[RMDB]
RNA sequence: GGGAACGACUCGAGUAGAGUCGAAAAACCUUAUUUUGAGAAGCUGAGGGAUUGGGCCCAUAGAAGCUUCAGCAACCGACUUUAAAUAGCACGGUGCUAAUACCAACGAGCAACUCGAAUGAUAAGUAAAACGUUGACAAGUUCGCUUGUCAACGAACCUAGAUAAAAAGUUCGCUUUUUAUCUAGGAAAAGAAACAACAACAACAAC
Reactivity to DMS in 0.01 (KOAc 150mM, MgCl2 10mM, bicine 150mM(pH8.5), 24C), signal-to-noise 1, nucleotides 027 to 156: a090c030c000u040u010a080u000u000u000u000g010a140g010a060a300g030c060u000g030a070g020g010g010a120u000u010g030g020g000c010c000c010a180u000a120g010a090a060g020c000u010u000c040a060g000c040a060a040c010c000g010a110c010u000u000u010a050a140a050u000a020g050c040a040c000g000g000u010g000c000u000a070a060u000a090c050c020a050a060c130g000a130g000c070a080a120c010u020c030g010a060a090u020g020a160u000a070a060g020u010a060a060a090a110c010g040u020u010g000a030c010a030a060g010u010u000c300g070c010u000u010g020u030c000a000a000c000g000a000a020
Reactivity to 2A3 in 0.01 (KOAc 150mM, MgCl2 10mM, bicine 150mM(pH8.5), 24C), signal-to-noise 3, nucleotides 027 to 156: a000c100c010u190u110a300u120u160u070u110g070a030g000a000a000g000c000u040g020a020g000g010g020a050u040u030g000g040g140c010c000c010a050u120a050g020a000a000g000c000u030u000c010a000g010c010a010a010c000c010g050a020c020u100u090u240a130a240a290u130a140g000c030a000c030g000g010u000g000c000u010a020a010u010a050c020c000a020a040c030g040a020g070c030a020a120c070u030c070g060a090a080u100g070a040u060a210a000g060u100a030a130a040a020c030g000u000u000g010a000c000a000a000g000u000u050c080g070c100u000u000g010u000c000a000a000c000g000a000a010
Chemical mapping of a 207-nucleotide RNA with DMS and 2A3.
Source: RMDB library M2RFPK, as collected in RNAgym.
2A3 adducts were read by reverse transcription with SuperScript II with manganese.
Reactivities are given for positions 27 through 156.
The reactions ran in a buffer of 150 mM KOAc, 10 mM MgCl2 and 150 mM bicine (pH 8.5), at 24 C.